Chemical mapping of a 177-nucleotide RNA with 2A3 and DMS. Conditions: 150 mM KOAc, 10 mM MgCl2 and 150 mM bicine (pH 8.5), 24 C.
RNA sequence: GGGAACGACUCGAGUAGAGUCGAAAAUCAUCUAACAGCACAACACUAUAAGGUUUACGCCGUACUGCCUCGGUUAAUACACCACCUUCGCCGUAUCCCACGUAGCCUGGAGGCGAGCCUUUUAAUGCUACGAAUAAACGUUCGCGUUUAUUCGUAGAAAAGAAACAACAACAACAAC
Reactivity to 2A3 in 0.01 (KOAc 150mM, MgCl2 10mM, bicine 150mM(pH8.5), 24C), signal-to-noise 4, nucleotides 027 to 126: u050c000a020u030c020u090a100a060c030a030g030c040a010c010a090a080c030a030c080u090a070u040a300a070g030g030u050u100u130a050c050g010c000c010g060u090a040c030u060g030c000c020u050c040g020g020u030u070a070a020u090a140c040a020c010c010a030c020c000u040u040c020g010c030c010g010u040a080u060c000c000c000a040c030g040u010a020g040c000c010u030g050g020a030g010g020c020g010a010g020c010c010u070u140u040u130a140a100u260g040
Reactivity to DMS in 0.01 (KOAc 150mM, MgCl2 10mM, bicine 150mM(pH8.5), 24C), signal-to-noise 5, nucleotides 027 to 126: u000c060a060u000c050u020a100a100c080a070g010c050a050c070a040a060c080a070c070u010a070u010a080a060g010g010u010u000u010a100c110g020c020c020g020u010a100c070u010g000c010c020u010c040g000g000u000u010a070a070u000a080c100a060c050c030a050c060c040u010u000c060g010c030c020g000u000a100u000c020c010c020a110c140g000u000a080g030c030c040u000g010g020a160g000g010c030g000a060g010c020c020u000u000u000u010a060a130u010g030
It was measured as part of the RMDB library OK2TRN.